[RMDB]
RNA sequence: GGGAACGACUCGAGUAGAGUCGAAAAGCGCGAAGCGGUGUAGCGUCACUUUGAUGGCGGUACUAUGAAUUGAUGCAAGGUGUGGAGCGACCUUGAACAGUUCUGGUGGUGCUCUGAAUGGAGUGCUUGAGGCCUCGCCGAUUCGUCGGCGAGGCAAUCAUCCCCCUCCUUUCGAGGAGGGGGAUGAAAAAGAAACAACAACAACAAC
Reactivity to 2A3 in 0.01 (KOAc 150mM, MgCl2 10mM, bicine 150mM(pH8.5), 24C), signal-to-noise 5, nucleotides 027 to 156: g060c040g010c020g090a040a030g030c060g040g010u070g010u060a020g070c010g030u050c010a010c070u190u160u270g160a230u040g030g010c030g000g090u030a030c030u030a070u150g040a040a020u040u040g040a050u140g050c000a010a010g000g020u020g010u120g030g020a030g010c010g000a020c000c000u010u010g010a080a020c000a010g010u030u010c000u050g050g000u040g000g020u030g020c010u010c010u080g090a080a050u200g020g020a020g010u020g010c010u030u060g080a050g060g040c000c000u000c000g000c000c000g010a010u000u060c170g040u010c000g050g000c020g010a000g010g000c000a000a000